An RNA of 177 nucleotides, treated with 2A3 and DMS and read out base by base. The 2A3 profile rests on 838 reads. For DMS, 1,238 sequencing reads were counted. DMS adducts were read by reverse transcription with MarathonRT.
RNA sequence: GGGAACGACUCGAGUAGAGUCGAAAAGAUAUCGACAAUGAACAGUGUGGAAAAUUUGCAGCAACAAUCAGCCAAGCUGUUUUUCCUGUCAAGAGGUUAUCGUGUUUGCAAUGUAGGCACAAAUUACCAUCGUGGUACUCUUCGGAGUACCACGAUGAAAAGAAACAACAACAACAAC
Reactivity to 2A3 in 0.01 (KOAc 150mM, MgCl2 10mM, bicine 150mM(pH8.5), 24C), signal-to-noise 1, nucleotides 027 to 126: g050a010u040a060u040c050g030a010c050a040a040u070g020a040a010c030a040g040u050g020u090g170g040a050a090a060a110u070u090u100g070c080a130g030c020a040a040c040a080a210u110c020a000g010c010c000a000a040g000c010u000g000u020u030u010u030u030c020c010u040g030u000c040a050a050g050a040g110g000u030u030a040u080c040g000u030g000u000u100u100g010c100a170a200u170g000u040a020g040g000c040a000c000a010a080a010u070u060a010c010
Reactivity to DMS in 0.01 (KOAc 150mM, MgCl2 10mM, bicine 150mM(pH8.5), 24C), signal-to-noise 2, nucleotides 027 to 126: g000a120u000a040u000c060g000a030c050a050a040u000g000a030a030c030a080g020u000g020u010g010g000a040a030a070a100u000u000u010g010c050a020g040c210a140a110c100a030a050u010c150a100g000c000c040a020a080g000c050u000g010u000u000u000u000u000c080c070u010g020u010c090a120a060g000a100g000g020u010u000a040u000c110g020u010g020u000u000u000g020c070a080a140u020g010u000a040g000g020c020a050c070a060a040a110u010u000a110c140